The record gives the reactivity of an RNA of 170 nucleotides to 2A3 and DMS. DMS adducts were read by reverse transcription with MarathonRT. For DMS, 79,681 sequencing reads were counted. The reactions ran in a buffer of 150 mM KOAc, 10 mM MgCl2 and 150 mM bicine (pH 8.5), at 24 C. The data come from the RNA Mapping Database (RMDB), library 15KLIB.
RNA sequence: GGGAACGACUCGAGUAGAGUCGAAAAGGCGGCGGGCCGGCUACUCUUCUUUUCCUUUUCUCGUCUUCCUCGGUCAGCCUCCUGAGUUCCUCUUCUUCCUCCCUGCUGAGGUUCUUCCCUCCCCCGGUUAGUACGAACUUCGGUUCGUACAAAAGAAACAACAACAACAAC
Reactivity to 2A3 in 0.01 (KOAc 150mM, MgCl2 10mM, bicine 150mM(pH8.5), 24C), signal-to-noise 6, nucleotides 027 to 129: g030g000c020g010g010c010g000g000g010c000c020g010g020c020u100a090c030u030c050u130u080c040u060u110u060u100c040c020u110u080u080u030c050u020c020g110u000c030u090u050c010c020u030c000g000g010u020c010a010g010c000c000u030c000c010u010g010a030g020u020u020c020c000u010c020u050u010c000u070u030c010c010u010c010c000c000u020g000c010u010g020a050g000g000u020u020c000u010u010c000c000c000u010c000c000c000c000c000g000g010u040u040a020
Reactivity to DMS in 0.01 (KOAc 150mM, MgCl2 10mM, bicine 150mM(pH8.5), 24C), signal-to-noise 8, nucleotides 027 to 129: g000g000c120g000g000c020g000g000g010c040c030g000g000c110u010a070c050u040c000u000u000c010u020u000u010u010c040c020u010u000u040u020c000u020c050g040u020c070u010u010c050c020u020c030g000g050u020c020a020g010c020c000u020c020c030u020g010a210g020u040u000c020c000u030c110u000u000c070u010u010c030c010u000c000c060c020u020g040c060u030g010a120g010g020u030u010c080u010u020c020c010c000u000c010c000c010c000c000g000g020u020u000a130